Structure probing data (2A3 and DMS) for a 177-nucleotide construct. The RNA was probed in 150 mM KOAc, 10 mM MgCl2 and 150 mM bicine (pH 8.5) at 24 C. For DMS the reverse transcriptase was MarathonRT.
RNA sequence: GGGAACGACUCGAGUAGAGUCGAAAAUAGCUUAUGACCGUAUGAUAAAUAAUGCUGACAUUGACUUUUAUAUCUCUUUCGAUAAUGAAAAAGUAGGUGAAUUACAAGCUAAAAGUCUGGUUGAACGCACUAAUCAAAGGUUCGCCUUUGAUUAGUGAAAAGAAACAACAACAACAAC
Reactivity to 2A3 in 0.01 (KOAc 150mM, MgCl2 10mM, bicine 150mM(pH8.5), 24C), signal-to-noise 3, nucleotides 027 to 126: u030a000g010c000u060u080a080u250g020a020c030c040g040u110a110u220g060a040u040a090a200a020u080a040a010u100g020c010u010g000a010c030a040u020u040g020a030c010u080u030u070u040a120u040a030u040c040u000c000u030u140u060c050g080a070u140a300a180u210g100a040a050a020a010a010g020u030a030g050g010u030g040a030a010u120u080a090c030a120a000g000c010u050a030a040a060a000g030u000c020u060g090g060u010u040g040a050a020c030g030
Reactivity to DMS in 0.01 (KOAc 150mM, MgCl2 10mM, bicine 150mM(pH8.5), 24C), signal-to-noise 5, nucleotides 027 to 126: u010a070g000c080u000u000a090u000g010a090c070c030g020u010a040u010g010a070u020a070a100a050u000a100a070u000g010c020u000g020a180c180a040u000u010g000a040c020u010u010u000u020a090u010a070u010c010u000c080u010u000u010c060g010a100u010a060a080u020g000a050a030a040a050a040g010u000a040g010g010u000g000a050a080u000u010a090c140a090a070g010c060u000a060a120a080a140g010u000c010u000g000g000u000u010g010a100a090c230g000